[RMDB]
RNA sequence: GGGAACGACUCGAGUAGAGUCGAAAAUUCAGUUCACUCGCAGCACGAUCCAGAAGGUGUGUGGUGUUGACGUGCAGUCAAUUGAAGACCUUCGCAUCAUUCGCGAUGUGUGCCGCCUUGUCCGUGGAUUUACGAUGGUAUUCGUACCAUCGUAAAUAAAAGAAACAACAACAACAAC
Reactivity to 2A3 in 0.01 (KOAc 150mM, MgCl2 10mM, bicine 150mM(pH8.5), 24C), signal-to-noise 9, nucleotides 027 to 126: u030u010c020a010g050u040u040c030a020c060u040c040g010c010a010g000c010a010c040g030a040u010c030c020a040g030a050a010g070g010u030g010u020g010u030g060g050u050g000u040u030g010a030c040g060u160g120c090a030g020u000c000a010a040u040u190g120a120a030g090a070c020c000u080u080c080g000c000a020u030c030a160u060u110c030g000c050g030a030u050g110u030g010u020g100c010c000g010c000c010u040u060g030u020c030c020g100u060g040g010
Reactivity to DMS in 0.01 (KOAc 150mM, MgCl2 10mM, bicine 150mM(pH8.5), 24C), signal-to-noise 9, nucleotides 027 to 126: u010u000c050a080g010u000u000c040a040c090u000c100g010c030a070g010c070a040c040g000a050u000c040c090a300g010a040a040g010g020u000g010u010g030u000g010g010u000g010u000u000g000a020c020g010u010g020c230a130g000u000c020a020a050u000u010g020a150a120g000a050c030c010u000u000c020g020c110a030u000c040a120u000u000c080g010c220g010a020u000g010u010g030u000g010c010c030g010c010c060u000u000g000u010c030c040g010u000g000g000
An RNA of 177 nucleotides, treated with 2A3 and DMS and read out base by base.
The reactions ran in a buffer of 150 mM KOAc, 10 mM MgCl2 and 150 mM bicine (pH 8.5), at 24 C.
As a SHAPE reagent, 2A3 marks flexible, mostly unpaired nucleotides at the ribose 2'-OH.
For 2A3, 27,819 sequencing reads were counted.